The data come from the RNA Mapping Database (RMDB), library OK1LIB. The record gives the reactivity of an RNA of 177 nucleotides to 2A3 and DMS. Reactivities are rounded to 0.1 and cut off at 0 and 3. The DMS profile rests on 3,341 reads. Values cover nucleotides 27 to 126. DMS (dimethyl sulfate) methylates the pairing face of unpaired adenines and cytosines. DMS adducts were read by reverse transcription with MarathonRT.

RNA sequence: GGGAACGACUCGAGUAGAGUCGAAAACUCGAAAGAGACCUGCAUAUCUUAGGCAGAUGAUCAAGUCACGUCUGAAAAGCGAAAGCCCUAAGAUAUGCAGCUGUGAAGACUUGUCGCAGAAAAUAAACACUACCUCGUGAUUCGUCACGAGGUAGUGAAAAGAAACAACAACAACAAC
Reactivity to 2A3 in 0.01 (KOAc 150mM, MgCl2 10mM, bicine 150mM(pH8.5), 24C), signal-to-noise 4, nucleotides 027 to 126: c000u010c000g010a020a050a010g060a010g030a070c000c000u000g010c000a000u000a000u000c000u000u010a000g000g000c010a000g010a020u020g020a040u120c010a000a000g010u000c000a010c080g020u000c010u020g080a210a220a150a030g020c030g060a060a020a000g000c010c000c000u000a010a010g000a010u000a000u000g000c000a000g010c000u000g000u010g010a090a030g000a010c000u000u000g000u010c000g000c010a000g100a030a070a010a040u270a020a070a010
Reactivity to DMS in 0.01 (KOAc 150mM, MgCl2 10mM, bicine 150mM(pH8.5), 24C), signal-to-noise 2, nucleotides 027 to 126: c000u000c020g010a080a140a120g000a000g000a090c300c020u000g020c000a000u000a000u000c000u000u000a000g000g010c000a000g000a000u000g020a200u050c000a010a020g010u000c010a300c010g020u010c000u000g010a110a030a130a150g000c000g000a100a060a140g000c000c000c000u000a000a000g000a000u000a000u000g000c000a010g020c030u020g000u010g000a010a070g030a000c020u000u000g000u000c000g010c010a010g000a150a020a050a100u050a090a080a080